Source information: This 207-nucleotide RNA was probed chemically with 2A3 and DMS. 2A3 adducts were read by reverse transcription with SuperScript II with manganese. The reactions ran in a buffer of 150 mM KOAc, 10 mM MgCl2 and 150 mM bicine (pH 8.5), at 24 C. It was measured as part of the RMDB library OK3TST.

RNA sequence: GGGAACGACUCGAGUAGAGUCGAAAAGAUUAGAGGAGGUGAAAAGAUGAUUUUCCAGGCUGAUGAGUGAGUACAAGCAAAGGCAUGAAACUAUGAAAAGGCUUACAAUUCCAUCCUAAUUUUGCUGUCGCCUUCACUUAAGAAAAUAAAGUUGAUACAGUGCUAUUAGGUUCGCCUAAUAGCACUGAAAAGAAACAACAACAACAAC
Reactivity to 2A3 in 0.01 (KOAc 150mM, MgCl2 10mM, bicine 150mM(pH8.5), 24C), signal-to-noise 2, nucleotides 027 to 156: g030a100u120u150a060g010a070g020g020a030g000g000u040g050a060a040a000a040g040a050u080g040a000u020u030u060u050c050c020a030g000g020c020u030g050a030u030g000a020g060u090g030a010g000u050a040c040a110a000g060c000a060a030a000g050g000c000a010u040g010a020a050a010c100u100a050u070g010a060a050a040a080g020g030c030u050u090a050c000a040a120u040u030c030c010a050u000c000c020u090a120a150u040u160u100u070g010c040u040g030u030c010g000c040c000u050u040c020a040c010u080u150a040a020g060a080a110a100a000u220a070a080a050g010u100u070g040a060u160a090
Reactivity to DMS in 0.01 (KOAc 150mM, MgCl2 10mM, bicine 150mM(pH8.5), 24C), signal-to-noise 1, nucleotides 027 to 156: g000a220u000u000a020g020a040g010g000a090g000g060u000g000a080a060a050a140g010a120u000g020a070u000u000u020u010c020c030a090g030g040c050u020g010a080u000g010a170g010u010g000a110g060u010a070c110a020a150g040c070a070a020a060g000g090c070a110u000g020a130a070a030c040u010a150u000g020a050a020a070a160g010g030c040u010u000a030c070a010a160u000u010c020c010a040u000c020c000u030a040a150u010u010u000u000g000c020u000g010u000c060g020c040c000u000u010c020a090c080u000u000a040a080g000a060a020a080a110u010a020a100a100g030u000u000g020a080u000a110